Overview:
Chemical mapping of a 177-nucleotide RNA with DMS and 2A3. For 2A3, 2,312 sequencing reads were counted. In probing experiments dimethyl sulfate is read out at A N1 and C N3, which are open when not base-paired. 2A3 adducts were read by reverse transcription with SuperScript II with manganese. It was measured as part of the RMDB library OK1LIB. The DMS profile rests on 5,212 reads.
[RMDB]
RNA sequence: GGGAACGACUCGAGUAGAGUCGAAAACGAGGGGGGCUGGGUUGGUCUCGGUGCAGCAGUCGGAAGCACGCCACGGCGUCCACGACCUCGGUGCUCUCCAAGGGGCUGUCCUCCGCAAACAGGCCCGAUGAAUAACGGGGUUCGCCCCGUUAUUCAUAAAAGAAACAACAACAACAAC
Reactivity to DMS in 0.01 (KOAc 150mM, MgCl2 10mM, bicine 150mM(pH8.5), 24C), signal-to-noise 3, nucleotides 027 to 126: c060g000a100g010g000g010g000g000g010c030u020g010g030g010u020u000g010g000u010c060u020c110g030g030u010g000c020a090g000c040a050g020u010c060g020g020a180a040g010c120a020c040g010c050c060a080c220g020g000c020g020u010c040c000a170c060g010a090c030c050u020c090g010g010u010g010c020u030c050u010c070c070a090a100g000g010g000g000c030u000g000u000c040c020u020c040c050g000c070a080a050a060c080a040g000g020c000c010c020g010
Reactivity to 2A3 in 0.01 (KOAc 150mM, MgCl2 10mM, bicine 150mM(pH8.5), 24C), signal-to-noise 3, nucleotides 027 to 126: c070g010a150g000g060g010g010g000g000c020u060g060g010g080u090u070g040g030u010c000u050c090g030g010u070g030c070a080g030c000a010g060u090c010g020g020a070a040g010c090a000c030g000c000c050a060c130g040g000c040g020u030c050c010a080c060g060a070c000c020u090c090g010g030u100g000c010u030c000u000c020c000a070a070g020g000g010g000c000u000g010u010c000c030u040c020c050g010c030a070a080a020c050a030g040g070c000c010c000g000